[RMDB]
RNA sequence: GGGAACGACUCGAGUAGAGUCGAAAAUACGGCUCUGACGGCACCACCACCUAAACCGCCCGGGGCAGAAAGGAGGGCCAGCAUGAGCUACAGCACACGCGCUGAAGUGCGGGACAUGGUCAAGGAUGACGCGCUCAACGCGAUCAUCGGCGACACCCACACCCCUACAGUUCGCUGUAGGGGUGUGAAAAGAAACAACAACAACAAC
Reactivity to 2A3 in 0.01 (KOAc 150mM, MgCl2 10mM, bicine 150mM(pH8.5), 24C), signal-to-noise 1, nucleotides 027 to 156: u150a050c090g010g000c000u020c030u000g060a060c040g030g010c000a200c130c000a020c030c000a090c010c000u100a150a200a130c020c010g080c070c100c070g050g000g040g000c010a000g060a070a100a000g020g060a000g010g040g000c020c010a010g000c000a040u100g000a000g000c020u040a110c050a060g000c000a020c020a060c100g140c000g010c020u120g040a230a040g040u060g000c020g010g000g020a030c080a190u200g080g000u000c000a050a000g120g000a000u000g000a010c000g000c040g050c070u190c270a100a150c040g010c020g170a300u020c000a000u000c010g000g010c000g000a000c000a000c000c000